[RMDB]
RNA sequence: GGGAACGACUCGAGUAGAGUCGAAAACUUCUGAACCACCACUGACGAAUCACAUUGAAACUAAAGAGAUGUAAUACGUCAUUUGGUGUUUCCGAAGUUUAUACUGUCAAGUUUAGCUUACUUUAACCCUAUACCCAACCUUCGGGUUGGGUAUAGGAAAAGAAACAACAACAACAAC
Reactivity to DMS in 0.01 (KOAc 150mM, MgCl2 10mM, bicine 150mM(pH8.5), 24C), signal-to-noise 1, nucleotides 027 to 126: c020u000u000c000u000g000a020a000c030c010a010c020c000a010c300u000g000a020c020g010a100a020u000c030a000c000a030u010u030g000a220a040a120c220u020a100a050a040g040a300g000a010u000g050u010a030a010u000a080c000g040u000c000a000u000u000u020g040g010u000g010u000u000u000c000c040g000a030a010g000u000u000u000a040u000a060c100u010g030u000c120a030a060g000u000u020u000a080g030c010u000u000a090c030u020u000u000a120a150c140

Conditions: 150 mM KOAc, 10 mM MgCl2 and 150 mM bicine (pH 8.5), 24 C. Chemical mapping of a 177-nucleotide RNA with DMS. The data come from the RNA Mapping Database (RMDB), library RFMREP.